[RMDB]
RNA sequence: GGGAACGACUCGAGUAGAGUCGAAAAGUGUGGGGAAUACCUUCAUCUGUGAAGAAGUCGCAAAUGACCUCACUACCGCCCUACGCAGGCCUAUUAACGCUACGGAUAGAUCACAUUAUUAUGUGGAAUAGACCAACGUUCGCGUUGGUCAAAAGAAACAACAACAACAAC
Reactivity to 2A3 in 0.01 (KOAc 150mM, MgCl2 10mM, bicine 150mM(pH8.5), 24C), signal-to-noise 8, nucleotides 027 to 129: g090u050g000u020g000g000g000g010a030a100u130a280c000c000u060u020c000a060u020c030u030g060u040g030a040a150g080a050a030g190u050c030g000c060a000a010a080u100g040a060c000c000u000c010a010c010u020a010c020c060g040c000c000c000u040a040c090g030c040a030g020g030c000c000u060a100u130u090a120a000c040g000c030u040a010c040g060g010a050u040a070g070a030u100c000a000c000a000u020u200a110u200u100a020u230g020u010g010g020a050a060u070a090
Reactivity to DMS in 0.01 (KOAc 150mM, MgCl2 10mM, bicine 150mM(pH8.5), 24C), signal-to-noise 4, nucleotides 027 to 129: g040u020g000u000g000g000g030g050a220a000u040a140c150c060u040u000c020a060u020c090u000g050u000g040a020a200g040a090a160g080u020c000g040c050a030a050a030u040g050a150c060c020u000c030a000c020u050a100c060c110g020c030c030c030u040a100c000g000c130a000g010g030c050c050u050a090u090u020a090a050c130g040c030u050a100c060g010g000a160u000a090g020a090u000c000a010c030a000u010u090a080u010u030a050u070g000u000g000g000a100a070u040a080